[RMDB]
RNA sequence: GGGAACGACUCGAGUAGAGUCGAAAAAGCGGCCUAGCGCGGCCGUCGGAUCUGGCCAGUACGACAGUACCUGUCGGAUCGAUCAGCGCGGCCAGUGGCCAUGGCCGAUCUAUCGUACGCGCCUAGGACCUUUCUGAUAAUUCGUUAUCAGAAAGGUAAAAGAAACAACAACAACAAC
Reactivity to DMS in 0.01 (KOAc 150mM, MgCl2 10mM, bicine 150mM(pH8.5), 24C), signal-to-noise 9, nucleotides 027 to 126: a120g010c070g010g000c000c000u000a110g000c020g020c020g000g010c030c010g020u000c080g030g000a050u000c010u000g020g000c000c040a080g000u000a050c000g010a130c300a130g010u000a040c060c040u000g010u000c000g010g000a040u000c030g010a100u010c180a110g010c140g010c080g010g000c000c000a120g030u010g020g020c020c030a100u000g010g010c000c010g000a030u000c030u000a110u010c050g010u000a060c050g010c060g010c070c030u000a080g000g000
Reactivity to 2A3 in 0.01 (KOAc 150mM, MgCl2 10mM, bicine 150mM(pH8.5), 24C), signal-to-noise 9, nucleotides 027 to 126: a000g050c030g010g020c010c010u020a010g010c020g000c010g010g010c020c000g000u010c080g060g000a010u000c020u080g010g000c020c030a010g010u030a010c040g120a080c100a090g010u060a070c020c030u020g020u010c010g020g030a060u060c030g010a200u180c080a070g080c040g010c000g090g000c010c050a080g090u090g210g030c050c040a070u060g010g000c010c000g000a010u000c010u040a070u100c040g050u060a030c050g000c000g020c050c020u040a050g040g080
Structure probing data (DMS and 2A3) for a 177-nucleotide construct. The 2A3 profile rests on 37,777 reads. The data come from the RNA Mapping Database (RMDB), library OK2TRN. The RNA was probed in 150 mM KOAc, 10 mM MgCl2 and 150 mM bicine (pH 8.5) at 24 C. For 2A3 the reverse transcriptase was SuperScript II with manganese.